Record summary
The record gives the reactivity of an RNA of 177 nucleotides to 2A3 and DMS. The DMS profile rests on 4,477 reads. For DMS the reverse transcriptase was MarathonRT. Source: RMDB library RFM100, as collected in RNAgym. The 2A3 profile rests on 510 reads.
RNA sequence: GGGAACGACUCGAGUAGAGUCGAAAAAAUCCGGCCAACUAAAGCUUUCAUAAUGGUCAUAAGGCGGCUGACCAACGGUCUCCACUGUGAAGCACAAAUAGCGGGAUGUCGUCUGUUGGGCCGAGAAUAGACUAUGCGGAUUCGUCCGCAUAGUCUAAAAAGAAACAACAACAACAAC
Reactivity to 2A3 in 0.01 (KOAc 150mM, MgCl2 10mM, bicine 150mM(pH8.5), 24C), signal-to-noise 1, nucleotides 027 to 126: a000a000u150c090c010g030g000c100c000a020a000c010u150a200a050a000g000c020u040u140u050c050a100u140a270a210u230g080g040u060c010a050u050a090a020g050g000c000g100g020c050u000g140a020c020c000a050a050c010g010g070u020c050u010c040c060a060c080u090g030u010g100a020a080g130c020a040c040a100a120a050u130a080g020c080g020g080g010a000u010g060u040c000g000u010c000u010g010u020u060g090g060g000c000c000g000a000g000a030a080
Reactivity to DMS in 0.01 (KOAc 150mM, MgCl2 10mM, bicine 150mM(pH8.5), 24C), signal-to-noise 3, nucleotides 027 to 126: a080a070u010c030c010g000g000c000c010a070a060c090u010a100a110a170g020c030u010u020u060c100a080u010a020a070u010g000g020u030c040a140u020a110a070g000g010c000g010g010c050u000g010a190c050c050a100a150c090g020g000u000c050u000c030c030a070c090u010g000u000g000a010a070g000c020a050c090a060a030a130u010a080g000c230g000g000g000a150u010g000u020c000g000u000c020u000g000u010u010g000g000g000c090c000g030a150g010a020a060